[RMDB]
RNA sequence: GGGAACGACUCGAGUAGAGUCGAAAAGUGCGGAGUGAAAUUCAUAGGAGCCUAGCCAAUUUGGCUGAACGCCUCGGUACUCCGCGUAGUCGCGACGUAAACGUUCUGUGUUGGCGUUCAGGCCUCAGCUCCUAUGACGAUUCGUCGUCAUAGGAGCAAAAGAAACAACAACAACAAC
Reactivity to DMS in 0.01 (KOAc 150mM, MgCl2 10mM, bicine 150mM(pH8.5), 24C), signal-to-noise 2, nucleotides 027 to 126: g030u010g000c000g030g000a010g010u000g030a040a070a060u050u030c060a080u010a060g010g050a040g020c040c010u070a100g020c020c050a110a180u020u070u020g010g030c020u010g000a020a040c020g000c020c030u010c110g010g000u020a020c000u000c000c020g000c000g020u000a060g000u000c080g000c040g000a040c050g000u000a100a080a120c060g000u020u010c050u000g040u000g010u010u000g000g020c000g060u010u000c080a050g030g030c020c000u020c110a220
Reactivity to 2A3 in 0.01 (KOAc 150mM, MgCl2 10mM, bicine 150mM(pH8.5), 24C), signal-to-noise 1, nucleotides 027 to 126: g100u050g000c000g010g000a020g000u080g100a110a070a080u260u160c060a090u080a060g070g050a050g000c010c000u040a030g030c000c010a030a090u180u080u140g010g000c000u000g000a040a030c000g000c000c000u080c010g130g040u030a030c010u000c010c000g000c000g050u020a000g040u090c050g000c000g030a020c040g020u180a000a050a030c060g110u140u000c050u020g090u000g070u070u100g000g000c060g000u030u000c010a030g150g000c020c000u060c060a000